[RMDB]
RNA sequence: GGGAACGACUCGAGUAGAGUCGAAAAUACAUCCGGCAGCGGUCAGGUAAGGCAAACCACGGUUUGGAGGGUGGUUCUCGGCUGAGAGCGCCGCGAGCUCUAUCUCCGGUCCAAAAUAAAAAUUUAAGUAUAUUAUGGUCUUCGGACCAUAAUAUACAAAAGAAACAACAACAACAAC
Reactivity to DMS in 0.01 (KOAc 150mM, MgCl2 10mM, bicine 150mM(pH8.5), 24C), signal-to-noise 2, nucleotides 027 to 126: u000a130c140a090u010c020c010g000g030c020a080g040c170g010g020u000c030a050g000g020u020a050a100g010g020c060a020a080a110c060c050a050c050g000g010u010u010u010g020g020a070g020g020g020u010g020g020u000u000c020u000c020g030g000c050u000g010a070g010a110g020c130g000c010c030g010c140g010a060g000c030u000c100u010a090u010c020u010c000c040g030g000u000c050c030a020a090a030a130u020a040a050a100a050a080u030u000u000a060a220
Reactivity to 2A3 in 0.01 (KOAc 150mM, MgCl2 10mM, bicine 150mM(pH8.5), 24C), signal-to-noise 1, nucleotides 027 to 126: u140a000c000a030u000c020c040g010g000c010a020g010c030g010g020u000c040a030g010g040u100a120a000g020g000c060a080a070a000c040c010a010c060g080g090u090u050u100g050g030a020g020g040g010u030g000g050u030u020c010u010c040g010g000c030u040g030a040g030a000g210c120g000c020c000g000c010g010a000g000c000u000c000u100a200u010c010u030c000c010g090g000u040c040c000a030a010a050a180u190a170a170a040a030a020u300u300u300a200a070